[RMDB]
RNA sequence: GGGAACGACUCGAGUAGAGUCGAAAAGAUAUGGAUUACAUAGGAGGUAGGGAACGCGAAGCCUAAAGUCGGAAACGACUUUAGGCUUCUAAGCCCUACUACCCACCCUAUGAAUAAUCCUAAGUCACUUUCUAGAUAACUUCGGUUAUCUAGAAAGAAAAGAAACAACAACAACAAC
Reactivity to DMS in 0.01 (KOAc 150mM, MgCl2 10mM, bicine 150mM(pH8.5), 24C), signal-to-noise 4, nucleotides 027 to 126: g030a050u000a300u010g000g010a020u000u000a060c000a010u010a010g000g000a140g030g000u000a000g020g000g000a070a050c180g020c220g010a010a030g020c020c000u010a000a000a010g030u000c010g010g010a080a060a190c000g010a020c000u000u000u000a010g000g010c000u010u000c000u010a100a150g010c000c000c000u000a020c000u000a010c050c080c140a300c120c010c000u000a000u000g020a150a100u000a000a010u000c000c000u020a040a150g000u000c020a300